Structure probing data (2A3) for a 207-nucleotide construct. Reactivities are given for positions 27 through 156. The reactions ran in a buffer of 150 mM KOAc, 10 mM MgCl2 and 150 mM bicine (pH 8.5), at 24 C. 2A3 adducts were read by reverse transcription with SuperScript II with manganese.
RNA sequence: GGGAACGACUCGAGUAGAGUCGAAAACGAUCUGUUCGCAGAUCGAGCUACGGAGACGUAGCAGAGCACGACAGAGCUAUGGGUCGUGCGAUACCAGAAAUAAGACCGCGUGCACUCGUCCUAGCACGUGGCAUAGCUCAAAGAAACAGGACGAGAACGUAGGGCGUCCGUUCGCGGACGCCCUACGAAAAGAAACAACAACAACAAC
Reactivity to 2A3 in 0.01 (KOAc 150mM, MgCl2 10mM, bicine 150mM(pH8.5), 24C), signal-to-noise 1, nucleotides 027 to 156: c030g000a010u000c000u010g090u150u080c180g000c110a000g000a000u000c000g000a000g000c000u000a000c000g050g000a110g000a060c000g000u000a000g020c020a030g060a010g000c010a000c000g000a000c020a050g050a000g030c020u040a040u160g000g080g000u000c000g000u000g000c010g000a010u020a030c040c060a100g120a070a140a050u190a060a010g040a030c000c000g000c000g000u000g000c000a010c010u010c000g030u000c000c000u000a000g010c000a000c000g000u000g000g000c000a000u060a010g010c000u040c040a140a120a000g170a010a120a060c110a010g000g030a010c020g000a000g040a000a000